[RMDB]
RNA sequence: GGGAACGACUCGAGUAGAGUCGAAAAGAUAUGGAAACUUUCUCUAGCGUGCGCGAAGAACAUACUAGUAGCUGUAUUCGGAAACGAAUACCGAAAGUAUGGGAGCGUCGGGAAGUUUCCUAAGUCAGCUAGUUAUAGUGUUCGCACUAUAACUAGCAAAAGAAACAACAACAACAAC
Reactivity to DMS in 0.01 (KOAc 150mM, MgCl2 10mM, bicine 150mM(pH8.5), 24C), signal-to-noise 4, nucleotides 027 to 126: g000a020u000a250u020g000g010a010a010a010c000u010u000u000c010u020c100u010a180g120c300g030u010g010c000g000c000g000a100a170g000a140a200c020a000u000a000c000u000a110g010u010a180g010c260u000g010u000a000u010u000c000g020g000a050a060a150c020g010a010a010u000a000c000c010g000a140a130a110g000u000a010u000g000g000g000a090g020c010g030u000c060g010g010g000a010a030g000u000u000u000c000c000u000a010a140g000u000c030a160
Reactivity to 2A3 in 0.01 (KOAc 150mM, MgCl2 10mM, bicine 150mM(pH8.5), 24C), signal-to-noise 5, nucleotides 027 to 126: g020a020u060a010u120g000g000a010a010a020c020u100u210u050c050u050c090u180a130g100c120g300u300g100c040g050c020g300a300a030g000a040a030c000a010u000a010c010u030a030g200u080a010g080c150u100g020u010a010u000u000c000g010g010a010a060a040c000g000a010a000u010a010c000c010g060a250a080a000g010u000a000u010g000g000g030a010g000c000g010u030c010g000g000g010a000a010g000u000u000u000c000c000u000a030a000g050u010c040a010

Chemical mapping of a 177-nucleotide RNA with DMS and 2A3. The 2A3 profile rests on 10,607 reads. Values are in units of 0.01, from 0 to 300, in steps of 10. The RNA was probed in 150 mM KOAc, 10 mM MgCl2 and 150 mM bicine (pH 8.5) at 24 C. Source: RMDB library TTRDES, as collected in RNAgym. For 2A3 the reverse transcriptase was SuperScript II with manganese.